[RMDB]
RNA sequence: GGGAACGACUCGAGUAGAGUCGAAAAUUAGUAGACACCUAAUGAAUGUCAAUAUGAUGAAAUGGCUAUAACUGAUGCUGCUUACUGAUAUGCCGGUUUUGCACUGUACAGCUCUAAUGAUGAUGAGCCCCCGUUAAUUGUUCGCAAUUAACGGGGGAAAAGAAACAACAACAACAAC
Reactivity to 2A3 in 0.01 (KOAc 150mM, MgCl2 10mM, bicine 150mM(pH8.5), 24C), signal-to-noise 1, nucleotides 027 to 126: u040u010a000g020u000a050g050a020c000a030c020c000u050a000a090u060g160a060a050u030g000u030c000a010a080u130a080u260g170a060u090g070a090a070a050u060g140g000c050u050a020u030a270a140c000u040g050a080u090g050c030u010g000c050u060u020a020c000u010g040a040u020a000u260g110c040c040g050g030u080u040u090u100g040c020a000c090u020g030u130a010c000a020g030c010u000c000u050a010a120u140g110a000u060g020a020u050g020a040g000
Reactivity to DMS in 0.01 (KOAc 150mM, MgCl2 10mM, bicine 150mM(pH8.5), 24C), signal-to-noise 2, nucleotides 027 to 126: u000u000a020g000u000a100g000a030c050a020c080c020u000a110a090u010g010a150a070u020g000u000c010a080a080u020a110u030g000a070u020g000a110a070a070u000g020g010c010u000a120u000a050a070c110u010g000a090u000g010c040u010g010c030u000u000a120c050u000g000a070u000a030u040g050c010c050g000g000u000u000u020u020g010c040a040c070u000g000u010a070c170a010g020c030u000c020u010a070a090u000g010a050u000g010a110u020g000a090g010

The record gives the reactivity of an RNA of 177 nucleotides to 2A3 and DMS.
Values cover nucleotides 27 to 126.
The data come from the RNA Mapping Database (RMDB), library OK2TST.
For 2A3, 728 sequencing reads were counted.
The RNA was probed in 150 mM KOAc, 10 mM MgCl2 and 150 mM bicine (pH 8.5) at 24 C.